[RMDB]
An RNA of 170 nucleotides, treated with DMS and 2A3 and read out base by base.

RNA sequence: GGGAACGACUCGAGUAGAGUCGAAAACGCCGGUGAAACUCUGGAAUAGGAAGAAGGAAGGUGGAAAGAAAGGAGGGACCCUCCCGAUCCGAGGGGCCCAACCACCAAGUUUGGAGAGCACUCCGGGAUACGAAUGUGUUCGCACAUUCGAAAAGAAACAACAACAACAAC
Reactivity to DMS in 0.01 (KOAc 150mM, MgCl2 10mM, bicine 150mM(pH8.5), 24C), signal-to-noise 9, nucleotides 027 to 129: c080g010c050c050g050g030u000g000a080a070a090c040u020c050u010g000g010a070a040u040a090g000g000a050a050g000a040a050g000g000a040a010g010g040u050g010g020a060a050a060g040a040a100a110g010g000a160g030g000g000a040c030c030c030u000c000c070c090g030a080u040c130c190g010a010g030g000g000g030c020c020c020a030a070c040c050a050c080c080a070a060g030u050u020u040g020g020a060g000a080g000c120a130c050u010c030c030g010g000g020a090u040a110
Reactivity to 2A3 in 0.01 (KOAc 150mM, MgCl2 10mM, bicine 150mM(pH8.5), 24C), signal-to-noise 9, nucleotides 027 to 129: c060g040c010c020g010g000u090g040a120a050a030c030u020c030u070g010g050a040a030u060a120g050g030a020a040g010a020a020g050g020a020a050g030g030u070g010g070a090a110a050g130a060a070a010g070g030a050g010g010g020a020c000c000c000u020c010c020c010g050a050u040c050c040g000a020g000g000g010g000c000c000c000a020a040c010c030a030c020c010a050a030g020u040u070u080g050g010a040g000a010g010c030a020c070u000c010c000g010g010g010a070u120a100